[RMDB]
RNA sequence: GGGAACGACUCGAGUAGAGUCGAAAAAAAGCAAAAUGAUUCCUUUCUUGCUGCAUACCUUUAGAAGUAAGACAUUUAGCUCUAGUUAUUAACUAAAUGAAAAUUCAGAAUUGCAUAACCAAAGAGGACAGAAACAUACCUAAUCACAAACAUCACAAAAUUAAUUAGGUUUCGACCUAAUUAAUUUAAAAGAAACAACAACAACAAC
Reactivity to DMS in 0.01 (KOAc 150mM, MgCl2 10mM, bicine 150mM(pH8.5), 24C), signal-to-noise 2, nucleotides 027 to 156: a060a030a100g040c040a030a030a090a120u000g010a150u010u000c070c010u000u020u000c040u020u000g020c010u010g000c000a130u000a100c120c050u030u010u000a140g000a110a060g040u000a070a120g010a230c020a010u000u000u000a020g020c040u000c080u000a120g020u000u000a080u010u000a040a030c010u000a030a010a020u030g000a090a090a030a100u010u000c090a150g000a070a100u000u010g020c040a110u000a110a200c050c010a020a070a110g010a130g000g010a200c050a110g010a080a000a040c040a060u000a100c020c010u010a040a090u010c050a100c070a090a020a060c040a060u000c090a060c100a060
Reactivity to 2A3 in 0.01 (KOAc 150mM, MgCl2 10mM, bicine 150mM(pH8.5), 24C), signal-to-noise 3, nucleotides 027 to 156: a000a010a000g120c110a110a060a030a070u080g020a090u090u050c020c000u050u010u000c030u020u030g030c000u010g030c020a050u080a200c030c040u090u130u120a110g010a100a010g030u100a050a010g040a040c000a010u000u000u000a000g000c030u020c010u020a080g130u230u090a140u150u060a300a300c010u000a010a000a000u030g030a030a060a020a040u070u070c020a040g080a120a070u080u040g010c000a010u040a110a130c010c030a080a000a010g100a030g000g030a030c020a040g090a010a100a000c020a070u090a090c010c010u050a070a040u160c020a020c040a100a110a020c010a040u110c020a060c060a140